[RMDB]
RNA sequence: GGGAACGACUCGAGUAGAGUCGAAAAGAUAUGGAUCUCGGUCAGGCAACAGCUUGAGCCGAACUAGUCGUCUCGGAAACGAGACGAGCUAGUUCGGCUCAAGACAUGCCUGUCGAGAUCCUAAGUCCACUCUUAGUAACUUCGGUUACUAAGAGUGAAAAGAAACAACAACAACAAC
Reactivity to 2A3 in 0.01 (KOAc 150mM, MgCl2 10mM, bicine 150mM(pH8.5), 24C), signal-to-noise 1, nucleotides 027 to 126: g070a050u170a060u300g020g010a020u010c010u000c010g060g060u240c020a000g010g030c000a030a030c030a300g080c010u030u010g020a010g090c060c040g020a020a020c030u000a050g100u200c040g020u000c050u000c060g040g040a300a120a070c020g000a010g110a160c040g030a010g080c010u050a020g030u000u020c000g070g000c010u000c000a050a000g010a000c000a010u040g010c000c000u000g000u000c000g000a010g010a000u000c000c000u000a010a000g030u000c000
Reactivity to DMS in 0.01 (KOAc 150mM, MgCl2 10mM, bicine 150mM(pH8.5), 24C), signal-to-noise 2, nucleotides 027 to 126: g010a140u000a300u000g000g010a000u010c000u000c000g020g020u010c010a010g000g000c010a040a050c300a190g000c010u000u000g000a020g000c010c000g030a010a000c000u000a010g000u000c000g010u010c000u000c000g030g000a130a120a260c020g020a040g020a010c020g010a050g020c000u000a010g010u000u000c000g000g020c020u000c000a000a000g020a030c120a100u000g030c000c000u000g010u000c000g010a010g000a000u000c000c000u000a020a070g010u010c050